[RMDB]
RNA sequence: GGGAACGACUCGAGUAGAGUCGAAAAAGUGCUGUUUUGCACCAUGUCCUGCAUGCACAAAUUCACAAAAGAGCUUUUCUAUUUUCUGGCAAUAGCCUCAGUCUUUCCACUCUUCUGAUGCUAAGGGUCUAGGACAAAACUUCGGUUUUGUCCUAGAAAAAGAAACAACAACAACAAC
Reactivity to 2A3 in 0.01 (KOAc 150mM, MgCl2 10mM, bicine 150mM(pH8.5), 24C), signal-to-noise 1, nucleotides 027 to 126: a010g030u000g000c020u000g140u190u120u180u080g000c010a010c060c030a130u100g040u060c010c020u000g030c030a010u030g000c030a000c030a110a140a130u080u070c070a110c030a080a010a010a070g030a060g070c000u210u100u020u090c050u010a190u050u130u010u010c020u060g010g000c000a040a120u050a140g020c010c000u020c020a030g000u000c000u040u030u010c000c000a030c010u050c000u110u030c030u080g070a060u130g000c020u050a070a000g000g010g060
Reactivity to DMS in 0.01 (KOAc 150mM, MgCl2 10mM, bicine 150mM(pH8.5), 24C), signal-to-noise 2, nucleotides 027 to 126: a070g020u010g010c030u000g000u020u010u010u010g000c010a040c030c060a100u010g020u000c060c040u010g010c080a070u000g020c090a030c110a060a040a110u000u000c060a130c110a010a020a100a120g020a080g010c060u000u000u010u010c010u000a060u000u000u000u000c120u010g000g000c020a060a140u000a050g020c110c010u000c030a040g000u010c010u000u010u000c010c030a050c090u000c030u020u010c030u010g020a100u000g010c030u010a060a100g030g010g010